[RMDB]
RNA sequence: GGGAACGACUCGAGUAGAGUCGAAAAUCUGCUAGUGCUCCCAACGAAAGUUGAUAGCGAUGUGCACGUUUAGGAGAUAAAUAGCUAGUAUCUUUCUACUCGGAUUCCCCUCUGUCGUCAUAGAGGGCUAUACUGGGAACUUCGGUUCCCAGUAUAGAAAAGAAACAACAACAACAAC
Reactivity to DMS in 0.01 (KOAc 150mM, MgCl2 10mM, bicine 150mM(pH8.5), 24C), signal-to-noise 2, nucleotides 027 to 126: u000c020u000g000c010u000a060g020u010g010c010u020c040c070c010a020a000c000g000a110a090a140g020u000u000g000a130u000a050g020c110g020a090u020g010u010g030c060a060c040g000u000u000u000a050g010g000a030g010a080u010a060a100a090u010a080g000c020u000a010g000u000a030u000c010u000u010u010c010u010a010c000u000c000g000g000a140u000u000c130c000c000c010u000c020u010g000u000c080g000u000c220a010u000a040g000a020g000g000g010
Reactivity to 2A3 in 0.01 (KOAc 150mM, MgCl2 10mM, bicine 150mM(pH8.5), 24C), signal-to-noise 3, nucleotides 027 to 126: u000c010u040g030c020u050a020g030u030g030c000u000c030c040c000a010a000c020g100a090a040a020g020u040u030g040a110u110a070g100c070g080a140u140g080u090g160c060a010c040g020u040u120u170a050g020g050a030g000a020u080a120a240a060u280a070g000c010u020a020g020u040a100u170c020u010u120u020c000u000a010c010u010c000g000g060a080u120u210c010c000c000c000u000c010u000g030u010c010g050u040c010a010u010a010g010a010g000g000g000
This 177-nucleotide RNA was probed chemically with DMS and 2A3. The reactions ran in a buffer of 150 mM KOAc, 10 mM MgCl2 and 150 mM bicine (pH 8.5), at 24 C. The data come from the RNA Mapping Database (RMDB), library RFMREP.